This 207-nucleotide RNA was probed chemically with 2A3 and DMS. The 2A3 profile rests on 1,407 reads. Reactivities are given for positions 27 through 156. Source: RMDB library OK3TST, as collected in RNAgym.
RNA sequence: GGGAACGACUCGAGUAGAGUCGAAAAGGGCUUGACGCAUCGCCCGAAUAAGAUGCAUGUGCUUUUGCACUAAGAUAAAUGUCCGUAUGGUAGGGGACUUAGAACCUACUCAUUAAUGUCCGAAGAGUCUGGGACGAUCAUCAGGCUAGACUAAGAACCCUCCAGUAAAUUUCGAUUUACUGGAGGGAAAAGAAACAACAACAACAAC
Reactivity to 2A3 in 0.01 (KOAc 150mM, MgCl2 10mM, bicine 150mM(pH8.5), 24C), signal-to-noise 2, nucleotides 027 to 156: g030g010g000c030u080u080g060a020c060g000c030a010u000c000g040c040c020c000g000a010a030u130a090a010g000a010u050g000c040a020u120g000u000g000c020u130u130u240u300g000c020a000c010u050a080a060g020a150u100a110a100a030u120g030u020c050c020g100u090a040u070g000g000u000a000g000g000g000g020a040c020u080u040a010g050a050a010c000c020u030a020c010u040c050a030u040u140a110a060u080g020u000c030c050g030a090a040g050a000g100u000c000u100g000g000g010a030c090g040a080u110c060a020u010c000a010g010g000c000u050a050g040a080c040u030a050a060g010a110a090
Reactivity to DMS in 0.01 (KOAc 150mM, MgCl2 10mM, bicine 150mM(pH8.5), 24C), signal-to-noise 1, nucleotides 027 to 156: g010g000g020c000u000u000g020a110c100g030c110a010u000c000g020c060c080c050g020a070a080u010a130a050g010a040u010g030c060a160u000g030u000g020c020u000u010u010u020g050c020a080c010u000a080a110g000a060u000a020a140a070u000g010u000c000c070g090u010a040u030g000g020u000a030g030g030g010g010a190c090u000u000a130g000a160a150c020c000u000a010c020u010c090a080u010u000a090a140u000g000u000c010c030g000a140a160g040a080g000u000c000u010g010g020g000a110c030g000a070u000c080a070u000c050a040g000g010c020u000a090g010a130c050u000a020a130g010a090a300